Source: RMDB library VIROID, as collected in RNAgym. Chemical mapping of a 177-nucleotide RNA with DMS and 2A3. The 2A3 profile rests on 992 reads. The RNA was probed in 150 mM KOAc, 10 mM MgCl2 and 150 mM bicine (pH 8.5) at 24 C. Values cover nucleotides 27 to 126.
[RMDB]
RNA sequence: GGGAACGACUCGAGUAGAGUCGAAAAUGGAACCGCAGUUGGUUCCUCGGAACUAGACUCGUGGUUCCUGUGGUUCACACCUGACCUCCUGAGCAGAAAAGAAAAAAGAAGGCGGCUCGGAGGAGCGCGUAGACAGAAACUUCGGUUUCUGUCUACGAAAAGAAACAACAACAACAAC
Reactivity to DMS in 0.01 (KOAc 150mM, MgCl2 10mM, bicine 150mM(pH8.5), 24C), signal-to-noise 2, nucleotides 027 to 126: u000g000g000a010a000c000c000g010c010a040g000u010u010g010g000u000u000c000c030u030c280g000g020a010a010c010u000a000g020a010c010u000c140g050u010g000g000u000u000c000c000u010g010u000g020g000u000u010c080a120c140a100c060c030u000g000a100c010c010u000c000c000u040g030a030g020c010a070g020a100a050a120a140g020a030a040a050a110a070a060g010a130a090g010g010c150g040g000c010u010c010g010g000a020g000g000a040g000c220g020
Reactivity to 2A3 in 0.01 (KOAc 150mM, MgCl2 10mM, bicine 150mM(pH8.5), 24C), signal-to-noise 1, nucleotides 027 to 126: u030g000g010a020a000c010c020g060c020a020g000u020u000g010g010u020u020c000c000u000c170g010g010a010a020c020u070a120g110a140c010u030c180g000u000g000g000u010u000c020c000u030g020u070g020g040u110u040c030a050c020a030c100c040u070g070a090c000c000u000c030c050u110g020a000g000c020a020g120a110a130a140a000g170a040a300a010a150a040a000g100a130a040g060g140c150g090g000c020u020c010g000g010a030g010g020a020g040c130g000
The DMS profile rests on 1,082 reads. Reactivities are rounded to 0.1 and cut off at 0 and 3.